Record summary: Structure probing data (DMS) for a 177-nucleotide construct. The reactions ran in a buffer of 150 mM KOAc, 10 mM MgCl2 and 150 mM bicine (pH 8.5), at 24 C. Values are in units of 0.01, from 0 to 300, in steps of 10. DMS adducts were read by reverse transcription with MarathonRT.
[RMDB]
RNA sequence: GGGAACGACUCGAGUAGAGUCGAAAAGAUAUGGACGCAUCGGACACGAGGCCUAAGGGAGUUGAGAGAUUCGGAAACGAAUUGGUAACGAAGAACUUAGGCCUCGUGUCCGAGUGCGUCCUAAGUCGUUAACUUAAGGGUUCGCCCUUAAGUUAACAAAAGAAACAACAACAACAAC
Reactivity to DMS in 0.01 (KOAc 150mM, MgCl2 10mM, bicine 150mM(pH8.5), 24C), signal-to-noise 3, nucleotides 027 to 126: g000a100u010a300u010g000g000a020c000g040c000a060u000c020g010g020a030c010a020c000g000a000g010g000c000c000u000a010a020g000g010g000a250g000u000u000g010a170g020a300g000a020u000u000c010g030g000a110a120a290c010g000a020a020u010u010g020g030u010a080a050c010g010a070a130g010a180a150c010u000u000a010g000g020c010c010u000c000g000u010g020u010c000c010g000a000g020u000g010c000g020u000c000c000u000a020a060g000u010c090
For DMS, 3,131 sequencing reads were counted.